[RMDB]
RNA sequence: GGGAACGACUCGAGUAGAGUCGAAAAUUUAACUAUCUAACACGGAGUUGGAGUGAUUUAAAGAUCGCUUUGACGAGCCAACAAUGGAAGAGCCAACACGUGAUUUAGCUACGCAUAGUUACUAACUGAACGUACUCAUCUUCGGAUGAGUACGUUCAAAAGAAACAACAACAACAAC
Reactivity to DMS in 0.01 (KOAc 150mM, MgCl2 10mM, bicine 150mM(pH8.5), 24C), signal-to-noise 1, nucleotides 027 to 126: u000u000u000a000a080c030u000a000u010c000u000a050a060c020a020c020g000g000a180g000u000u000g000g010a040g000u010g040a220u070u020u030a010a030a040g000a130u000c000g020c000u000u000u040g030a020c000g000a040g000c000c030a060a090c230a140a090u020g000g020a000a000g050a120g000c000c020a030a000c000a050c000g000u000g000a130u020u020u000a050g010c300u000a030c090g050c130a020u020a010g010u000u000a030c240u020a040a110c200u000
Reactivity to 2A3 in 0.01 (KOAc 150mM, MgCl2 10mM, bicine 150mM(pH8.5), 24C), signal-to-noise 3, nucleotides 027 to 126: u030u040u040a010a000c000u030a050u060c000u000a010a000c000a000c010g010g000a160g060u000u000g060g010a040g070u240g120a140u010u110u240a030a040a030g040a100u020c000g010c030u170u050u200g000a000c000g010a000g000c000c010a080a070c060a250a260u190g020g000a010a010g130a000g300c020c000a010a000c000a000c000g000u010g030a050u050u040u020a010g020c080u100a040c040g030c120a010u000a060g000u030u010a030c040u070a060a030c030u000